An RNA of 177 nucleotides, treated with DMS and 2A3 and read out base by base. The DMS profile rests on 3,725 reads. Reactivities are given for positions 27 through 126. It was measured as part of the RMDB library OK1LIB.
[RMDB]
RNA sequence: GGGAACGACUCGAGUAGAGUCGAAAACGGCGUACGGGUCAUAGACGCCCUGCGCGUUACACACCACGGGCAGGGAGACGAACAACCCCCCGGCGCUGGACGCACGCGGAAGGAGGCCAGGGUGUGCCUGGCCCUACCGGUUCGCCGGUAGGGCCAGAAAAGAAACAACAACAACAAC
Reactivity to DMS in 0.01 (KOAc 150mM, MgCl2 10mM, bicine 150mM(pH8.5), 24C), signal-to-noise 3, nucleotides 027 to 126: c010g010g010c000g010u000a040c060g010g000g010u010c150a160u010a120g020a170c120g000c000c000c000u000g000c000g040c020g000u000u040a090c180a040c160a070c060c100a030c030g030g000g020c000a030g000g010g000a090g000a090c090g030a060a100c300a070a180c050c090c080c000c000c010g010g000c000g000c000u000g010g000a070c100g030c040a030c080g000c000g020g000a080a050g000g030a120g000g010c010c020a040g020g000g000u010g000u040g020c180
Reactivity to 2A3 in 0.01 (KOAc 150mM, MgCl2 10mM, bicine 150mM(pH8.5), 24C), signal-to-noise 4, nucleotides 027 to 126: c020g030g020c010g010u200a160c020g110g000g040u070c060a090u090a140g090a040c020g020c000c010c000u000g000c210g000c000g010u040u100a050c130a000c000a000c020c040a000c010g010g040g000c010a000g030g020g000a090g100a040c070g060a110a080c040a060a090c000c010c000c000c000c020g000g000c020g000c020u040g050g020a040c040g040c020a050c020g060c040g070g030a060a040g050g060a050g030g010c010c030a030g040g030g000u040g000u020g030c010